[RMDB]
RNA sequence: GGGAACGACUCGAGUAGAGUCGAAAAGAUAUGGAGACGUCCAGUAUACGUCUUGAGGGAGAAGACACAUCGGAAACGAUGUGGCUUCAUCGAUCUCACUGGACGUAUACUGGACGUCUCCUAAGUCCAGAUAGCUUGUGUUCGCACAAGCUAUCUGAAAAGAAACAACAACAACAAC
Reactivity to DMS in 0.01 (KOAc 150mM, MgCl2 10mM, bicine 150mM(pH8.5), 24C), signal-to-noise 2, nucleotides 027 to 126: g000a090u000a300u010g000g000a020g000a070c000g010u000c000c000a000g030u000a030u000a000c010g010u010c010u000u010g000a040g000g000g000a060g000a010a000g010a030c000a010c000a040u000c000g020g000a150a110a290c000g010a010u000g060u000g000g000c010u000u010c030a200u000c280g010a180u010c010u000c010a060c300u000g000g000a000c000g000u020a000u000a000c000u000g010g000a000c000g000u000c000u000c000c000u010a010a030g010u000c050
This 177-nucleotide RNA was probed chemically with DMS. The DMS profile rests on 1,908 reads. Reactivities are given for positions 27 through 126. Values are in units of 0.01, from 0 to 300, in steps of 10.